[RMDB]
RNA sequence: GGGAACGACUCGAGUAGAGUCGAAAAUGGCGGCGUCCGUCAGGACGGAGAGCCAGGCCGCCAGGUCCUCGGGGGCGUCCAGCGUCUGGCCCCGCUGUAUCAGAUCCCGCAACAGGAUGGCCGUGGGCCGUGAAUGAGCGUUCGCGCUCAUUCACGGAAAAGAAACAACAACAACAAC
Reactivity to 2A3 in 0.01 (KOAc 150mM, MgCl2 10mM, bicine 150mM(pH8.5), 24C), signal-to-noise 3, nucleotides 027 to 126: u070g010g000c010g040g000c020g010u000c000c000g050u130c140a110g020g020a010c010g050g000a150g020a010g110c020c010a010g030g010c030c020g000c010c000a000g030g040u020c000c000u020c060g110g000g010g000g010c030g070u030c020c020a020g010c000g030u030c000u010g010g000c000c000c000c010g000c030u040g030u050a120u090c020a020g020a100u010c000c000c020g010c000a050a090c010a030g100g000a030u080g060g000c000c030g050u120g040g010g030
Reactivity to DMS in 0.01 (KOAc 150mM, MgCl2 10mM, bicine 150mM(pH8.5), 24C), signal-to-noise 2, nucleotides 027 to 126: u000g000g030c000g000g010c010g000u000c000c020g020u050c300a080g000g020a000c030g000g030a130g010a140g010c030c020a050g000g010c000c040g000c030c080a120g000g050u020c000c040u020c180g000g050g000g010g000c090g040u010c050c110a110g010c030g000u010c000u000g000g000c010c020c020c010g000c040u000g000u010a040u030c140a110g010a100u010c020c000c000g010c160a080a170c180a140g000g000a080u030g000g020c030c030g000u010g040g000g000